[RMDB]
RNA sequence: GGGAACGACUCGAGUAGAGUCGAAAAAAAAGAUAUGGAUGCACUGGAGAAGAUAAGCACGAUGAAAGGGAUCGGAAACGAUCCCUGGAGUGCGAAACUUCUAUGAAGGUGCAUCCUAAGUCAAAAAGAAUAAGUGAUAGUUCGCUAUCACUUAUUCAAAAGAAACAACAACAACAAC
Reactivity to DMS in 0.01 (KOAc 150mM, MgCl2 10mM, bicine 150mM(pH8.5), 24C), signal-to-noise 6, nucleotides 027 to 126: a080a070a100a090g010a030u000a300u010g000g000a010u000g000c000a000c000u000g020g000a020g000a010a000g010a030u010a110a300g000c000a000c010g000a130u010g000a150a110a020g000g010g010a010u000c000g010g000a140a060a180c010g000a000u000c000c010c000u000g000g010a050g030u000g000c000g000a040a140a130c000u000u000c000u000a190u000g010a110a170g000g000u000g010c000a000u000c000c000u000a010a070g010u020c040a060a080a070a110a100
Reactivity to 2A3 in 0.01 (KOAc 150mM, MgCl2 10mM, bicine 150mM(pH8.5), 24C), signal-to-noise 3, nucleotides 027 to 126: a000a000a010a010g060a020u070a030u120g000g000a000u000g010c010a000c020u020g030g030a010g000a020a000g010a030u060a090a050g030c010a000c030g300a300u070g010a040a030a010g010g000g000a000u000c010g000g000a070a070a030c010g010a000u000c020c010c000u000g000g000a010g000u000g010c020g000a030a010a000c000u010u000c010u070a300u030g010a020a010g000g010u000g000c000a000u000c000c000u000a010a000g010u010c000a000a080a000a000a130